[RMDB]
RNA sequence: GGGAACGACUCGAGUAGAGUCGAAAAUCAACUUCCAUGGUUGCUACAAUACUGUCUGCUGGAAGUACUUUUAGAAACGCGGUGGAAACAGGGACCUCCACAUCGCUUUUAUUUUUAGACGCGUCUGAAUACGCGGUCAAUUCGUUGACCGCGUAUUAAAAGAAACAACAACAACAAC
Reactivity to DMS in 0.01 (KOAc 150mM, MgCl2 10mM, bicine 150mM(pH8.5), 24C), signal-to-noise 2, nucleotides 027 to 126: u030c100a090a080c060u000u000c010c010a080u010g000g000u000u010g010c070u020a050c110a000a060u050a100c080u010g010u000c030u010g010c080u030g000g000a070a040g000u020a090c110u000u020u010u020a050g020a000a070a090c070g030c000g020g000u000g000g000a050a070a140c120a100g000g000g000a080c050c090u000c020c030a030c030a070u000c090g000c020u000u000u020u010a060u020u000u020u010u020a080g000a040c030g000c100g000u010c040u010g000
Reactivity to 2A3 in 0.01 (KOAc 150mM, MgCl2 10mM, bicine 150mM(pH8.5), 24C), signal-to-noise 4, nucleotides 027 to 126: u090c000a000a050c000u020u020c010c000a030u170g210g000u120u030g040c030u060a080c090a100a110u130a270c170u090g080u100c030u040g040c000u030g030g010a000a000g020u020a080c010u110u260u050u080a080g090a030a050a010c030g010c030g010g020u020g010g050a040a100a070c030a110g000g010g090a080c010c010u000c020c000a030c000a060u110c020g000c000u020u090u040u040a110u040u120u000u040u080a030g010a040c080g020c010g110u010c020u040g010